[RMDB]
RNA sequence: GGGAACGACUCGAGUAGAGUCGAAAAAUUAGUGUGCCGUACUAGCUUAUAGCGAUGACUCAGUGCACGAAAGCUCACGCGCCACUGCAACCAAUUGUGCGGCAGUAGGAGGAAGGGCUCGUGGCCCACUCCACAAUAGUUUCGACUAUUGUGGAGUAAAAGAAACAACAACAACAAC
Reactivity to DMS in 0.01 (KOAc 150mM, MgCl2 10mM, bicine 150mM(pH8.5), 24C), signal-to-noise 9, nucleotides 027 to 126: a090u010u000a100g020u000g020u010g020c010c040g010u000a060c080u000a190g010c030u000u010a120u010a100g020c010g010a120u000g000a090c070u010c130a070g010u000g000c010a010c020g010a070a080a080g000c030u000c070a090c110g020c110g000c030c020a030c020u000g010c060a060a060c030c040a130a130u010u010g010u010g050c300g000g010c010a020g010u000a080g010g000a100g010g000a140a120g000g000g010c020u000c100g020u000g010g000c010c010c020
Reactivity to 2A3 in 0.01 (KOAc 150mM, MgCl2 10mM, bicine 150mM(pH8.5), 24C), signal-to-noise 9, nucleotides 027 to 126: a000u130u110a050g030u010g030u040g040c010c010g010u040a060c030u030a030g030c010u180u170a120u230a300g020c030g090a110u120g070a100c010u020c120a020g010u020g060c000a000c030g030a060a040a000g020c010u020c030a040c060g050c030g010c010c000a030c010u020g000c020a040a070c020c020a140a270u180u190g070u110g050c030g040g000c010a010g020u060a120g000g060a030g050g040a070a100g020g010g000c010u030c050g070u090g080g020c000c000c000